An RNA of 177 nucleotides, treated with DMS and read out base by base. For DMS the reverse transcriptase was MarathonRT. For DMS, 949 sequencing reads were counted.
[RMDB]
RNA sequence: GGGAACGACUCGAGUAGAGUCGAAAACACUCUAUUGCCCAGGUUGGAGUACAAUGGUAUGAACUUGGCUCACUACAACCCCGACCUCCUGGGUUCAAGCAAUUUUCGUGCCUCGGCUUCCAGAGUACAUGCCGACUGAUUUCGAUCAGUCGGCAUGAAAAGAAACAACAACAACAAC
Reactivity to DMS in 0.01 (KOAc 150mM, MgCl2 10mM, bicine 150mM(pH8.5), 24C), signal-to-noise 1, nucleotides 027 to 126: c150a060c010u000c000u000a100u000u000g010c040c020c010a030g000g010u000u000g010g020a090g030u000a020c070a070a040u010g000g000u000a120u010g000a050a070c120u010u020g020g020c060u000c020a070c190u000a070c110a030a100c010c000c000c080g000a160c020c020u000c010c000u000g020g000g010u000u000c080a010a050g000c120a070a050u000u000u000u000c080g030u010g020c030c000u000c050g000g010c080u000u000c010c000a080g000a090g000u000a150